[RMDB]
The data come from the RNA Mapping Database (RMDB), library OK1LIB. The record gives the reactivity of an RNA of 177 nucleotides to 2A3 and DMS. DMS adducts were read by reverse transcription with MarathonRT. The reactions ran in a buffer of 150 mM KOAc, 10 mM MgCl2 and 150 mM bicine (pH 8.5), at 24 C. Reactivities are rounded to 0.1 and cut off at 0 and 3. For 2A3 the reverse transcriptase was SuperScript II with manganese.

RNA sequence: GGGAACGACUCGAGUAGAGUCGAAAAUUCAUGGAGACCCAUCCCACACUGGAUGCCUUACACUGUGACAUCGGCAAUGCCACUGAGUUUUACAAAAUAUUCCAAGAUGAGAUUCGGGAGGUGUCCCAUAUAAUGGACUAUUCGUAGUCCAUUAUAUAAAAGAAACAACAACAACAAC
Reactivity to 2A3 in 0.01 (KOAc 150mM, MgCl2 10mM, bicine 150mM(pH8.5), 24C), signal-to-noise 9, nucleotides 027 to 126: u070u050c040a040u100g050g020a070g030a070c020c010c010a040u030c000c010c000a050c010a020c040u050g030g010a030u060g030c010c010u080u100a050c080a030c050u060g030u060g080a030c010a060u050c020g030g010c030a040a060u090g020c010c010a040c050u040g020a030g060u040u060u040u060a080c090a020a110a040a040u170a120u110u060c030c010a050a040g060a120u110g030a030g020a110u080u080c040g020g020g010a050g020g030u060g040u020c000c000c000
Reactivity to DMS in 0.01 (KOAc 150mM, MgCl2 10mM, bicine 150mM(pH8.5), 24C), signal-to-noise 9, nucleotides 027 to 126: u020u020c070a070u020g010g010a080g010a090c030c020c010a130u010c020c010c020a130c130a070c120u010g000g000a050u000g000c040c020u000u010a080c110a090c100u010g010u010g010a080c060a040u010c080g010g010c090a080a070u010g000c020c020a080c050u010g010a070g000u000u010u010u020a090c150a060a070a080a080u030a080u020u010c040c050a060a100g000a110u010g010a130g000a090u010u010c040g010g000g010a060g000g010u010g000u000c010c000c090